[RMDB]
RNA sequence: GGGAACGACUCGAGUAGAGUCGAAAAUUUGUCUAAGAGAACAGUUGGUUUUCUAGUCAGCUUUUAUUACUGGACAACAUUACACAUACUAUACCUUAUCAUUAAUGAACUCCAGCUUGAUUCUGAACCGCUGCGGGGCCUGAACGGUGGGUCAGGAGCUAAUAAUGCUCUUCGGAGCAUUAUUAGCAAAAGAAACAACAACAACAAC
Reactivity to 2A3 in 0.01 (KOAc 150mM, MgCl2 10mM, bicine 150mM(pH8.5), 24C), signal-to-noise 3, nucleotides 027 to 156: u030u010u060g000u020c020u040a070a050g000a000g020a050a020c040a020g020u060u050g020g050u020u080u160u130c030u100a040g040u030c000a000g010c000u070u010u050u090a110u120u030a130c000u010g010g020a000c020a070a000c010a090u070u230a040c070a020c020a140u170a080c030u160a110u030a140c030c030u160u120a140u190c080a110u100u220a130a060u090g040a050a050c030u020c010c010a020g000c050u080u120g040a120u170u100c050u110g020a120a100c070c020g020c030u030g000c080g020g030g020g050c000c020u010g040a020a020c020g060g040u040g040g050g000u010c000a040g000g040a010
Structure probing data (2A3) for a 207-nucleotide construct. It was measured as part of the RMDB library OK3TST. The reactions ran in a buffer of 150 mM KOAc, 10 mM MgCl2 and 150 mM bicine (pH 8.5), at 24 C. The 2A3 profile rests on 845 reads.